[RMDB]
RNA sequence: GGGAACGACUCGAGUAGAGUCGAAAAAUUCACUCCUGGCUUUGCUUUCCUGGCACUGAUGCCGGAACAGGACAAGCCAUUUAGCUGCUGUGGGGUUGGCCUGAGACUGCAAAGCACACCUUCCAGAGUACAAGGUGAGUUUCGACUCACCUUGUACAAAAGAAACAACAACAACAAC
Reactivity to DMS in 0.01 (KOAc 150mM, MgCl2 10mM, bicine 150mM(pH8.5), 24C), signal-to-noise 3, nucleotides 027 to 126: a080u010u010c110a140c100u000c030c050u000g040g000c000u000u000u000g000c000u000u000u000c000c000u000g050g020c020a190c300u010g020a130u010g040c000c000g000g000a110a120c070a000g030g000a070c050a020a010g020c000c010a060u000u010u010a070g000c060u000g010c040u000g000u010g030g000g010g030u000u000g020g000c020c020u000g010a220g000a080c120u000g000c040a010a030a020g010c020a090c140a100c090c110u000u000c030c040a060g000a300
Reactivity to 2A3 in 0.01 (KOAc 150mM, MgCl2 10mM, bicine 150mM(pH8.5), 24C), signal-to-noise 2, nucleotides 027 to 126: a030u150u100c030a010c080u050c000c000u010g050g020c000u050u020u020g000c000u030u010u060c030c030u090g000g000c010a090c180u300g080a230u190g000c000c000g000g000a030a030c020a020g040g000a030c010a030a000g030c000c000a010u080u060u060a030g010c060u130g000c050u070g040u040g030g030g070g130u040u030g000g010c000c010u010g020a060g000a070c060u050g020c010a000a000a030g020c010a010c000a040c110c020u110u050c030c000a040g020a060

An RNA of 177 nucleotides, treated with DMS and 2A3 and read out base by base. Reactivities are given for positions 27 through 126. High DMS reactivity at an A or C suggests that its Watson-Crick edge is free.